[RMDB]
Chemical mapping of a 177-nucleotide RNA with DMS and 2A3.
2A3 adducts were read by reverse transcription with SuperScript II with manganese.

RNA sequence: GGGAACGACUCGAGUAGAGUCGAAAAGAAAUGUCACCUAAAUCGGUGGGUGGAGAAAACGUGCCGUUUUGGAAUGGUGCUGUUGUGCAUGAUUCACCACUUAUGACCGACAGGUCUGGGUCAGAAGCUUUCCCAAACACUUCGGUGUUUGGGAAAGAAAAGAAACAACAACAACAAC
Reactivity to DMS in 0.01 (KOAc 150mM, MgCl2 10mM, bicine 150mM(pH8.5), 24C), signal-to-noise 2, nucleotides 027 to 126: g000a080a080a000u030g000u040c030a010c030c000u000a000a080a060u010c050g000g000u010g000g030g000u000g010g020a080g020a150a050a100a030c080g060u000g000c000c030g010u000u030u030u030g000g000a110a030u040g000g020u000g000c020u000g040u000u010g000u030g010c100a050u020g000a180u010u000c000a140c070c110a000c090u010u010a040u040g030a060c000c030g000a080c300a060g030g000u000c080u000g010g020g010u000c070a030g070a120a080g010
Reactivity to 2A3 in 0.01 (KOAc 150mM, MgCl2 10mM, bicine 150mM(pH8.5), 24C), signal-to-noise 3, nucleotides 027 to 126: g100a020a090a030u260g020u060c030a030c010c000u060a060a050a030u120c060g010g000u010g020g080g020u010g020g110a130g170a000a020a010a000c050g090u050g000c000c000g080u010u030u050u090g150g130a160a070u030g020g000u030g000c040u050g030u070u010g040u060g010c070a100u130g000a070u040u020c040a000c050c020a060c020u030u160a150u260g000a020c000c020g030a010c040a090g000g020u000c010u040g020g000g040u060c040a050g100a090a040g040